[RMDB]
RNA sequence: GGGAACGACUCGAGUAGAGUCGAAAAGAAGACGUGACGAAAAGUCACGUCAAUACAGAGACUACGCAACUCUGAAAAACACAACAAAGGUGUAAAAGCGUAGCAGGAUCGAGAGAUCCUGAAAAGACGUAGGUAUGGGGUUCGCCCCAUACCUACGAAAAGAAACAACAACAACAAC
Reactivity to 2A3 in 0.01 (KOAc 150mM, MgCl2 10mM, bicine 150mM(pH8.5), 24C), signal-to-noise 2, nucleotides 027 to 126: g140a050a010g020a010c000g050u020g000a010c000g150a300a250a000a000g000u010c000a000c000g000u000c000a000a000u070a000c000a000g000a000g010a020c000u000a000c000g000c050a100a000c000u000c000u000g010a100a040a030a050a010c100a050c050a210a040c120a250a180a040g210g000u040g010u030a040a050a000a010g010c000g000u000a000g000c000a000g000g010a000u000c000g000a010g000a000g000a130u010c000c000u000g000a000a000a000a000g040a000
Reactivity to DMS in 0.01 (KOAc 150mM, MgCl2 10mM, bicine 150mM(pH8.5), 24C), signal-to-noise 2, nucleotides 027 to 126: g010a210a070g000a040c040g000u010g010a000c000g000a210a050a110a210g000u010c000a000c000g000u020c030a040a080u010a270c040a000g020a010g010a190c010u030a010c000g000c000a040a020c000u000c000u030g010a090a100a100a120a010c030a050c010a050a040c230a020a140a190g000g000u010g000u000a000a030a010a300g050c000g000u000a000g030c000a000g000g010a000u000c000g000a070g000a180g000a000u000c000c000u000g000a140a090a060a170g040a110
Source: RMDB library OK1LIB, as collected in RNAgym. Structure probing data (2A3 and DMS) for a 177-nucleotide construct. DMS adducts were read by reverse transcription with MarathonRT.